Record summary: Conditions: 150 mM KOAc, 10 mM MgCl2 and 150 mM bicine (pH 8.5), 24 C. This 207-nucleotide RNA was probed chemically with 2A3. Reactivities are rounded to 0.1 and cut off at 0 and 3. It was measured as part of the RMDB library OK3TST.
[RMDB]
RNA sequence: GGGAACGACUCGAGUAGAGUCGAAAAAUCAUAAAAGGUGUAGGCAUAUUAAUAUAGAGGCAAAGGAUGAUGAAAAGCCACACCCUUGAACUUAGAGCCACUAAGAUGUCUGCUGAUACAUUUCUUCUAUCAUAUGCAUAUGAAAUUUUUGUGGUAAACGUAGGGGAUCAUUCGUGAUCCCCUACGUAAAAGAAACAACAACAACAAC
Reactivity to 2A3 in 0.01 (KOAc 150mM, MgCl2 10mM, bicine 150mM(pH8.5), 24C), signal-to-noise 1, nucleotides 027 to 156: a000u160c110a140u180a190a090a080a030g000g000u050g000u060a010g090g000c060a080u230a080u230u060a110a020u230a000u020a110g110a000g030g000c050a020a020a020g170g070a110u290g030a050u130g010a070a030a050a180g020c120c090a000c000a090c080c010c010u000u030g000a050a030c000u060u030a060g020a060g140c000c000a000c050u000a000a010g060a050u000g000u050c020u140g000c020u030g130a060u010a180c020a160u060u080u000c060u070u070c020u010a050u000c030a030u050a060u270g050c010a020u030a050u220g080a030a080a040u030u100u000u050u080g000u030g000g000u030a190a180